[RMDB]
RNA sequence: GGGAACGACUCGAGUAGAGUCGAAAAUGCCUAUUUUGCCCAGGCGGAGCUCGACCGCCCACUGAAGCGAUGAUCGCCUUCAUCGAAGAGCACCGGAUGGACUUCGGGGUCGAGCCGAUCGGCAAGGGAAAUGUAAUACGUUCGCGUAUUACAUUUCAAAAGAAACAACAACAACAAC
Reactivity to 2A3 in 0.01 (KOAc 150mM, MgCl2 10mM, bicine 150mM(pH8.5), 24C), signal-to-noise 6, nucleotides 027 to 126: u110g010c010c000u040a090u060u210u040u040g010c020c010c030a040g100g190c040g060g030a090g050c000u010c000g010a010c000c020g060c000c020c020a030c020u030g030a030a010g010c020g050a060u140g090a120u230c030g050c050c040u020u020c010a070u030c020g010a030a020g030a030g080c030a020c020c030g150g110a150u210g070g150a300c010u020u010c030g030g010g000g000u010c000g010a000g000c000c000g010a030u030c030g000g000c000a010a020g100g030
Reactivity to DMS in 0.01 (KOAc 150mM, MgCl2 10mM, bicine 150mM(pH8.5), 24C), signal-to-noise 5, nucleotides 027 to 126: u020g000c000c000u000a140u010u010u000u010g000c010c010c090a040g010g020c020g020g000a130g010c000u000c010g010a040c000c020g010c010c020c050a240c220u000g010a050a060g000c020g010a220u010g000a080u010c120g010c140c050u000u010c010a050u010c040g010a040a050g000a110g030c110a140c040c030g010g010a140u010g000g020a160c050u000u000c010g020g000g000g020u000c000g000a020g010c010c020g000a050u010c240g010g010c020a040a030g010g000